[RMDB]
RNA sequence: GGGAACGACUCGAGUAGAGUCGAAAAGGUAGCUUACGGCCUAUAGUUCAUCAGGGGAAGGAGCUACCUGAGAUAGUGGCGUCGCCGCAACGUAGUCAAGCGACCGCUGAACUCGGCUGUGCACCGCAGGCGUUCAUGAGUUCGCUCAUGAACGCCUAAAAGAAACAACAACAACAAC
Reactivity to DMS in 0.01 (KOAc 150mM, MgCl2 10mM, bicine 150mM(pH8.5), 24C), signal-to-noise 1, nucleotides 027 to 126: g010g020u000a040g020c010u020u000a060c050g000g010c010c010u000a030u000a080g020u020u010c180a120u040c130a030g000g000g000g000a200a140g010g010a060g010c010u010a080c010c010u000g000a050g000a090u000a050g030u040g030g020c080g000u000c090g040c010c010g000c300a040a090c060g000u000a090g020u020c040a230a100g000c090g020a040c040c140g040c060u030g030a060a100c110u000c060g000g020c040u000g000u010g030c130a030c040c010g000c170
An RNA of 177 nucleotides, treated with DMS and read out base by base. It was measured as part of the RMDB library OK2TRN. The reactions ran in a buffer of 150 mM KOAc, 10 mM MgCl2 and 150 mM bicine (pH 8.5), at 24 C. For DMS, 706 sequencing reads were counted.